[RMDB]
RNA sequence: GGGAACGACUCGAGUAGAGUCGAAAACCGGAGCAACUUGCAAGACAUACUUCUGUCCACGCAUAUCGCGGGCUUUCACAUCCAGGGAUUGCAAGCUGCCUGGUGCGCCUGACAUAGCAUCCGGCUGCAACAGGCCAUUUUUCGAAAUGGCCUGUUGAAAAGAAACAACAACAACAAC
Reactivity to DMS in 0.01 (KOAc 150mM, MgCl2 10mM, bicine 150mM(pH8.5), 24C), signal-to-noise 5, nucleotides 027 to 126: c000c000g010g000a160g010c000a020a020c010u000u000g010c000a040a040g020a150c060a060u010a210c180u010u010c080u010g010u010c010c010a090c050g000c130a130u010a080u000c110g030c020g000g000g000c080u000u000u000c130a110c140a080u010c120c080a070g010g000g010a140u010u000g000c000a010a030g010c050u000g000c000c000u000g010g020u000g010c120g010c030c000u000g010a070c150a080u000a070g020c050a110u000c050c060g010g020c050u000g010
Reactivity to 2A3 in 0.01 (KOAc 150mM, MgCl2 10mM, bicine 150mM(pH8.5), 24C), signal-to-noise 4, nucleotides 027 to 126: c000c000g020g000a180g010c010a020a020c020u010u020g000c010a030a000g050a060c010a080u250a120c080u110u160c040u100g110u090c000c040a190c120g040c030a070u090a130u300c090g000c040g020g000g010c020u080u260u230c120a110c020a130u050c080c060a050g090g030g040a050u010u030g000c000a020a020g000c000u020g000c000c000u010g010g000u020g010c020g000c000c030u030g010a030c060a160u200a040g000c010a020u010c040c080g080g000c050u070g030
Conditions: 150 mM KOAc, 10 mM MgCl2 and 150 mM bicine (pH 8.5), 24 C. This 177-nucleotide RNA was probed chemically with DMS and 2A3. For 2A3 the reverse transcriptase was SuperScript II with manganese. The data come from the RNA Mapping Database (RMDB), library OK2TRN. Values cover nucleotides 27 to 126.